[RMDB]
Structure probing data (DMS and 2A3) for a 207-nucleotide construct.
RNA sequence: GGGAACGACUCGAGUAGAGUCGAAAAGAUUUGGGUGAGGACUCGGAUCCAAACCAUGUCAUUCAUAGAGCAUACAGCCUGGUUCUCAUUAAACCAACCAUGCCAAACAGUGCUUAAGUACAGUUGUGAGAUGUGCUGCAAAGGAAACCCUAGUAAAUAUUUAGUACUCGUUCGCGAGUACUAAAUAAAAAGAAACAACAACAACAAC
Reactivity to DMS in 0.01 (KOAc 150mM, MgCl2 10mM, bicine 150mM(pH8.5), 24C), signal-to-noise 2, nucleotides 027 to 156: g000a060u000u010u000g030g030g010u000g000a210g040g020a060c030u010c110g030g010a130u000c000c000a070a080a140c010c020a090u000g000u010c060a110u000u000c060a110u000a160g010a060g010c040a050u000a090c130a080g030c030c060u000g020g010u000u000c040u010c140a080u000u000a090a060a120c040c030a060a110c030c040a050u000g000c010c010a050a100a140c010a120g000u010g010c010u000u000a040a120g000u000a070c070a140g010u000u020g020u020g000a120g010a090u000g010u000g020c010u000g000c030a030a060a120g020g000a080a020a060c010c020c020u000a110g020u000a080a120a180
Reactivity to 2A3 in 0.01 (KOAc 150mM, MgCl2 10mM, bicine 150mM(pH8.5), 24C), signal-to-noise 2, nucleotides 027 to 156: g030a030u090u080u110g070g030g040u050g040a020g020g000a010c040u050c270g000g100a160u100c050c060a000a010a080c020c000a010u020g050u000c050a050u120u010c040a050u090a080g040a030g020c010a030u020a080c040a070g020c000c010u020g020g000u090u000c010u010c000a060u110u240a120a080a040c030c000a000a000c030c000a050u110g000c010c000a060a160a090c040a120g020u040g060c000u080u110a090a020g000u060a010c020a050g030u100u020g050u090g100a100g000a110u050g040u030g000c020u000g040c040a080a010a030g030g020a100a030a080c020c010c050u070a050g070u180a010a030a190
The RNA was probed in 150 mM KOAc, 10 mM MgCl2 and 150 mM bicine (pH 8.5) at 24 C. The DMS profile rests on 2,678 reads. 2A3 adducts were read by reverse transcription with SuperScript II with manganese.